[RMDB]
This 177-nucleotide RNA was probed chemically with 2A3 and DMS. For DMS the reverse transcriptase was MarathonRT. The 2A3 profile rests on 13,014 reads. DMS (dimethyl sulfate) methylates the pairing face of unpaired adenines and cytosines. 2A3 adducts were read by reverse transcription with SuperScript II with manganese. The reactions ran in a buffer of 150 mM KOAc, 10 mM MgCl2 and 150 mM bicine (pH 8.5), at 24 C.
RNA sequence: GGGAACGACUCGAGUAGAGUCGAAAAUCAUGCCUGUUCGCAGGCAUGAAAAUAAAUUCAGCGGUAAUUGCUCCGCAAAUAUUACCGCUGAUCCGGAGCAAAAAACAUGAAUCUUCGGAUUCAUGAAGAUUAAAGCUAAGUUCGCUUAGCUUUAAUCAAAAGAAACAACAACAACAAC
Reactivity to 2A3 in 0.01 (KOAc 150mM, MgCl2 10mM, bicine 150mM(pH8.5), 24C), signal-to-noise 5, nucleotides 027 to 126: u010c000a000u000g000c000c000u010g030u030u040c270g020c090a000g000g000c000a000u000g000a000a000a000a000u050a000a030a020u050u010c000a000g000c000g010g000u010a010a020u040u050g030c060u080c190c150g010c020a000a060a000u130a000u000u010a000c000c000g000c000u000g000a000u000c000c020g080g080a070g050c040a050a150a080a030a010a020c010a010u010g000a010a000u000c010u030u090c230g100g000a010u020u010c000a000u010g000a020a030
Reactivity to DMS in 0.01 (KOAc 150mM, MgCl2 10mM, bicine 150mM(pH8.5), 24C), signal-to-noise 6, nucleotides 027 to 126: u000c000a000u000g000c000c000u000g010u000u010c200g030c010a010g010g020c000a000u000g000a010a020a100a070u000a060a070a100u000u000c000a010g010c000g000g000u000a010a010u000u010g000c060u010c180c220g010c070a040a060a080u010a210u000u000a000c000c000g010c000u000g000a010u000c020c010g000g000a080g020c150a010a060a070a070a070a110c010a000u000g000a010a010u000c000u000u020c200g020g010a010u000u000c000a010u000g000a060a080